[RMDB]
RNA sequence: GGGAACGACUCGAGUAGAGUCGAAAAUGAGACACCUUCGGGUGUCUCACAUUAAGCUGACGAGCUAUGAGGUCAAUAUCGUCAUGCACAAAUAGAAUAAAACAGCUUGCUCCUUCGGGAGCAAGAAUCAGUCUACACCAUUCGUGGUGUAGACUGAAAAAGAAACAACAACAACAAC
Reactivity to 2A3 in 0.01 (KOAc 150mM, MgCl2 10mM, bicine 150mM(pH8.5), 24C), signal-to-noise 2, nucleotides 027 to 126: u060g010a000g000a000c010a020c000c000u000u040c220g050g000g000u000g020u000c000u000c000a000c000a000u040u030a140a000g000c010u000g020a020c040g010a000g000c040u090a070u220g110a080g110g140u110c040a130a040u010a050u150c000g000u010c000a020u270g040c010a030c050a070a130a040u270a110g160a120a080u170a170a080a030a010c030a000g010c000u000u000g000c000u000c000c000u000u060c120g070g000g020a000g000c000a000a000g000a000a000
Reactivity to DMS in 0.01 (KOAc 150mM, MgCl2 10mM, bicine 150mM(pH8.5), 24C), signal-to-noise 1, nucleotides 027 to 126: u010g020a020g000a040c000a020c000c000u000u000c230g000g000g030u000g020u000c000u000c000a020c160a020u000u000a120a210g010c020u000g000a020c000g000a080g030c140u000a110u020g000a150g010g000u000c080a100a130u010a070u000c020g000u000c010a020u000g020c020a090c290a120a020a090u020a050g020a160a020u010a050a050a100a090c130a080g000c000u000u000g000c000u000c000c000u000u000c200g030g000g000a000g000c000a000a000g000a020a070